[RMDB]
The record gives the reactivity of an RNA of 177 nucleotides to DMS.
RNA sequence: GGGAACGACUCGAGUAGAGUCGAAAAAAAAGAUAUGGAGGAAUCGUAGGCUGAUGACCAUGGUCACAGUACUUCGGAAACGAAGUAUCACAGCCAUGCAAGGCCGAGGAUUCCUCCUAAGUCAAAAGCUCAUUGCAAUGUUCGCAUUGCAAUGAGCAAAAGAAACAACAACAACAAC
Reactivity to DMS in 0.01 (KOAc 150mM, MgCl2 10mM, bicine 150mM(pH8.5), 24C), signal-to-noise 1, nucleotides 027 to 126: a000a140a020a140g020a000u020a300u000g050g000a000g000g000a070a000u000c000g000u000a300g000g020c000u050g020a130u020g000a130c300c070a000u000g000g050u000c010a100c300a270g000u000a000c000u000u000c000g020g000a050a120a120c000g010a000a000g020u020a000u000c020a150c300a300g020c000c000a000u000g040c080a100a200g000g080c000c010g000a100g000g000a020u020u000c000c000u010c000c000u030a020a020g000u000c020a030a080a170a150
Conditions: 150 mM KOAc, 10 mM MgCl2 and 150 mM bicine (pH 8.5), 24 C.